Overview: An RNA of 207 nucleotides, treated with DMS and 2A3 and read out base by base. It was measured as part of the RMDB library M2RFPK. The 2A3 profile rests on 6,589 reads. The RNA was probed in 150 mM KOAc, 10 mM MgCl2 and 150 mM bicine (pH 8.5) at 24 C. High DMS reactivity at an A or C suggests that its Watson-Crick edge is free.

RNA sequence: GGGAACGACUCGAGUAGAGUCGAAAAUGCAAGUAGUGCUAUUGUUAGAAUCACCGUACCUAUUUAGGUUUACGCUCCAAGAUCGGUGGAUAGCAGCCCUAUCAAUAUCUAGGAGAACUGUGCUAUGAAAACGGUAUUGGCUUCGGCCAAUACCGAAGAUAUAUGAACUCUUCGGAGUUCAUAUAUCAAAAGAAACAACAACAACAAC
Reactivity to DMS in 0.01 (KOAc 150mM, MgCl2 10mM, bicine 150mM(pH8.5), 24C), signal-to-noise 3, nucleotides 027 to 156: u010g010c070a090a210g010u010a080g020u000g020c000u000a050u010u010g010u000u010a170g000a170a140u020c000a020c020c000g030u000a030c020c010u010a190u010u010u000a020g000g010u000u000u010a060c050g050c010u000c030c010a100a090g000a050u000c070g030g050u000g020g000a050u000a060g010c030a150g030c100c090c020u000a090u000c040a090a110u010a070u000c090u000a120g000g000a070g020a030a040c020u010g020u000g010c030u010a080u000g000a070a080a090a210c040g030g020u000a010u010u010g010g010c030u010u020c300g090g020c000c000a010a020u000a010c000c000g020a000a010
Reactivity to 2A3 in 0.01 (KOAc 150mM, MgCl2 10mM, bicine 150mM(pH8.5), 24C), signal-to-noise 7, nucleotides 027 to 156: u140g000c050a050a050g060u080a010g050u100g040c020u060a050u130u100g100u160u130a070g070a140a090u140c010a020c020c000g020u020a020c010c000u070a170u240u210u240a010g000g010u030u050u040a020c030g010c010u000c010c020a040a010g010a050u060c030g020g040u020g050g020a020u020a010g010c040a020g020c030c000c010u040a070u080c040a080a050u040a020u200c020u030a020g010g010a010g020a030a030c060u080g030u050g100c040u080a030u190g090a060a090a030a020c010g010g000u000a000u000u000g000g000c010u010u040c170g060g000c000c000a000a010u000a000c000c000g000a000a000